[RMDB]
This 177-nucleotide RNA was probed chemically with DMS. Values cover nucleotides 27 to 126. For DMS the reverse transcriptase was MarathonRT.

RNA sequence: GGGAACGACUCGAGUAGAGUCGAAAAUGUAUAUAAUGGCGUUGCUCUGAACGGCAUUUGGCUGAAAAAUGUUGUUUAUUGCCCGCGCCAUGUUAUUGGGAAGUAUCGUGGAACCCAAUGGGCCCAGGUCAUCUCCACAGUUCGCUGUGGAGAUGACAAAAGAAACAACAACAACAAC
Reactivity to DMS in 0.01 (KOAc 150mM, MgCl2 10mM, bicine 150mM(pH8.5), 24C), signal-to-noise 1, nucleotides 027 to 126: u030g000u020a050u000a090u000a090a020u000g000g010c000g010u000u000g000c000u000c040u010g000a000a000c000g010g010c010a010u000u010u000g000g050c300u000g000a050a150a010a000a000u030g020u000u000g010u000u010u010a030u000u000g010c170c070c150g070c030g020c000c010a010u000g000u000u010a000u000u000g020g000g000a130a090g000u000a140u000c150g010u020g000g000a120a240c050c000c030a020a030u020g030g010g000c050c020c000a090g020